[RMDB]
RNA sequence: GGGAACGACUCGAGUAGAGUCGAAAAAUCAUGACGAAGAAAGGACGAGAGCAAGCUGAGAGGCAAGCUGAGAGGCAAGCUCAAAGAAAGGAGCGUCCAACUCCUUACCCACGUCUUUUAAAAAGAACAUUGAAUAGUGCUUCGGCACUAUUCAAUGAAAAGAAACAACAACAACAAC
Reactivity to 2A3 in 0.01 (KOAc 150mM, MgCl2 10mM, bicine 150mM(pH8.5), 24C), signal-to-noise 1, nucleotides 027 to 126: a000u130c070a040u110g020a010c040g020a030a110g060a070a120a000g000g000a010c010g050a010g010a020g130c010a090a040g000c040u040g000a040g020a040g130g030c020a030a030g030c020u000g000a040g010a030g000g020c040a040a020g000c020u020c010a120a120a010g140a040a040a000g010g000a020g000c000g080u030c000c000a050a080c000u000c000c010u000u020a040c000c000c020a040c040g030u000c000u100u100u010u070a090a090a000a000a010g090a060a020
Reactivity to DMS in 0.01 (KOAc 150mM, MgCl2 10mM, bicine 150mM(pH8.5), 24C), signal-to-noise 2, nucleotides 027 to 126: a140u020c050a070u000g000a070c100g000a110a150g010a060a030a080g000g000a060c020g000a180g020a010g030c080a110a190g000c030u000g020a170g010a230g000g050c000a100a110g020c030u000g030a150g000a140g000g030c010a060a190g020c010u000c040a060a060a100g040a050a050a010g020g020a030g000c030g000u000c060c090a030a160c040u000c000c010u000u000a110c020c010c040a070c070g000u000c010u010u000u000u020a030a100a030a020a120g000a060a190